[RMDB]
RNA sequence: GGGAACGACUCGAGUAGAGUCGAAAAGAUAUGGACGAUGAUGGACAUGUCCUGGUGUCGGAAACGACACUUGGACAACAGCCAUACAUCGUCCUAAGUCAAACUAUGUCUGUUCGCAGACAUAGAACAUAGCGUAGAAGUUCGCUUCUACGCUAUGAAAAGAAACAACAACAACAAC
Reactivity to DMS in 0.01 (KOAc 150mM, MgCl2 10mM, bicine 150mM(pH8.5), 24C), signal-to-noise 9, nucleotides 027 to 126: g010a030u000a150u010g000g000a020c000g010a010u000g010a050u000g000g000a040c130a230u010g010u000c000c000u000g010g010u000g010u000c000g010g000a040a030a080c010g010a010c000a000c000u000u000g010g000a020c010a070a050c300a180g000c000c000a010u000a150c010a000u000c000g010u000c000c000u000a010a070g000u000c010a140a140a270c010u000a000u000g000u000c000u000g010u000u010c280g020c010a010g010a010c000a000u010a000g010a100a250
Reactivity to 2A3 in 0.01 (KOAc 150mM, MgCl2 10mM, bicine 150mM(pH8.5), 24C), signal-to-noise 7, nucleotides 027 to 126: g010a010u030a020u080g000g000a000c000g000a000u000g000a010u000g020g010a040c170a300u300g000u000c000c010u020g000g010u000g010u010c010g010g010a030a030a020c000g000a000c000a000c010u010u010g000g010a000c010a050a050c080a040g010c000c010a020u100a220c010a000u070c010g000u000c000c000u000a010a000g000u000c020a020a030a110c010u000a010u010g010u000c010u010g090u090u140c300g030c120a000g000a000c000a000u000a000g000a120a020